Chemical mapping of a 177-nucleotide RNA with DMS and 2A3.
For 2A3, 1,323 sequencing reads were counted.

RNA sequence: GGGAACGACUCGAGUAGAGUCGAAAAGUCUAGCGAAGGGAUCCCACCCGGGAGACACGCAAGUCGCGAAUUACGCCGACCGGCCAAGGUCAAUUGCAGAACUCAACUGCAUGAGUAAGCUAGACGACGAGCCACUAUAGUUCGCUAUAGUGGCUCGAAAAGAAACAACAACAACAAC
Reactivity to DMS in 0.01 (KOAc 150mM, MgCl2 10mM, bicine 150mM(pH8.5), 24C), signal-to-noise 2, nucleotides 027 to 126: g000u010c030u000a000g040c010g000a110a020g050g010g000a050u000c000c010c000a300c250c010c020g000g020g000a160g000a010c000a080c140g000c010a040a060g060u000c020g000c020g000a190a160u030u000a090c140g000c050c070g000a060c000c300g000g040c020c110a130a080g000g010u000c020a090a090u010u020g000c000a000g030a040a110c240u000c300a050a080c030u000g000c000a000u000g000a190g020u000a090a210g000c000u000a000g020a020c000g000a150
Reactivity to 2A3 in 0.01 (KOAc 150mM, MgCl2 10mM, bicine 150mM(pH8.5), 24C), signal-to-noise 2, nucleotides 027 to 126: g000u000c000u020a010g010c040g170a250a180g040g000g010a030u030c000c000c000a040c010c050c000g010g040g050a150g010a000c030a000c080g000c010a050a030g000u000c020g030c040g000a230a300u280u150a160c080g070c100c020g040a020c000c040g010g000c010c010a110a030g030g000u050c020a020a020u080u010g020c000a040g040a220a130c040u040c200a030a150c060u020g020c040a010u030g030a030g080u040a020a000g000c000u000a000g000a000c040g010a020
Values cover nucleotides 27 to 126. For DMS the reverse transcriptase was MarathonRT.